[RMDB]
RNA sequence: GGGAACGACUCGAGUAGAGUCGAAAAACCCGUCACGACGGUUGCGCGCACCAUCAAAGACUGCGUGAAGACGGGCACGGAUCCUUAUCAGCUUCGGGCCGCGAUCGAGCGAGCCGAAGCCGAGGGCCACGAGGUGGCCUUUCGAGGCCACCUCGUGAAAAGAAACAACAACAACAAC
Reactivity to DMS in 0.01 (KOAc 150mM, MgCl2 10mM, bicine 150mM(pH8.5), 24C), signal-to-noise 2, nucleotides 027 to 126: a110c010c000c000g050u000c000a060c110g020a130c090g020g010u040u030g020c080g040c050g040c020a040c070c090a140u020c180a050a200a100g000a110c120u000g000c040g020u000g000a150a090g020a030c020g000g010g040c080a050c090g000g040a040u000c030c010u000u000a150u000c080a010g000c000u000u020c000g010g020g010c030c000g100c020g020a130u040c240g000a130g000c010g000a020g000c000c000g000a030a070g030c020c050g010a020g000g000g050c100